Chemical mapping of a 177-nucleotide RNA with 2A3 and DMS. For 2A3 the reverse transcriptase was SuperScript II with manganese. For 2A3, 50,545 sequencing reads were counted. The RNA was probed in 150 mM KOAc, 10 mM MgCl2 and 150 mM bicine (pH 8.5) at 24 C.

RNA sequence: GGGAACGACUCGAGUAGAGUCGAAAAGAUAUGGAGGACCGUAGCAAGGCAGUAGUCGGAAACGACUACAUGCUGAUGACCUACCGGUCCUCCUAAGUCAAAAGUACCACUGUUCGCAGUGGUACAACAACUAUGCAUAGUUCGCUAUGCAUAGUUGAAAAGAAACAACAACAACAAC
Reactivity to 2A3 in 0.01 (KOAc 150mM, MgCl2 10mM, bicine 150mM(pH8.5), 24C), signal-to-noise 9, nucleotides 027 to 126: g000a000u040a010u090g000g000a000g000g010a000c000c000g010u000a010g030c170a290a300g030g000c000a000g000u010a000g000u000c010g010g000a040a020a010c010g000a000c000u010a000c020a040u010g000c010u020g020a160u260g130a160c010c010u010a030c070c090g000g000u000c000c000u010c000c000u000a000a000g010u000c010a010a020a010a140g010u000a000c000c000a000c010u010g050u090u110c300g020c160a000g000u000g030g000u000a000c000a000a000
Reactivity to DMS in 0.01 (KOAc 150mM, MgCl2 10mM, bicine 150mM(pH8.5), 24C), signal-to-noise 9, nucleotides 027 to 126: g000a030u000a240u000g000g000a020g010g010a020c000c010g020u000a020g000c080a130a100g010g020c000a030g010u000a000g010u000c000g000g000a050a040a120c000g010a010c000u000a000c000a030u000g030c000u000g010a130u010g010a140c300c010u000a020c090c110g050g000u000c000c000u000c000c000u000a010a050g000u000c030a100a100a140a130g020u000a010c000c000a010c000u000g010u000u020c240g020c010a000g010u000g000g000u000a000c000a060a160